[RMDB]
RNA sequence: GGGAACGACUCGAGUAGAGUCGAAAAGACCCCAGGCAGCACAUGGCCCAGAGCAUCCCAGCCCAGUGGAGGGCGGCACAUGGCGGGAGGGCGGGAGUCCGUGUCCACUCAUGGCCGGGGAGGGGAGCGACACAUCGGGGUUCGCCCCGAUGUGUCGAAAAGAAACAACAACAACAAC
Reactivity to 2A3 in 0.01 (KOAc 150mM, MgCl2 10mM, bicine 150mM(pH8.5), 24C), signal-to-noise 1, nucleotides 027 to 126: g080a030c000c000c000c000a000g060g010c000a000g000c010a000c000a080u130g040g000c030c030c030a000g060a000g060c000a120u080c030c040c020a030g000c010c030c000a090g000u100g000g050a080g000g040g000c000g000g000c020a040c040a250u110g040g000c040g000g050g000a140g030g020g060c270g010g020g020a080g070u010c030c020g180u040g010u000c020c000a040c010u080c060a260u180g000g000c070c000g100g000g000g000a160g040g040g000g000a060g000
The record gives the reactivity of an RNA of 177 nucleotides to 2A3. The 2A3 profile rests on 453 reads. Conditions: 150 mM KOAc, 10 mM MgCl2 and 150 mM bicine (pH 8.5), 24 C.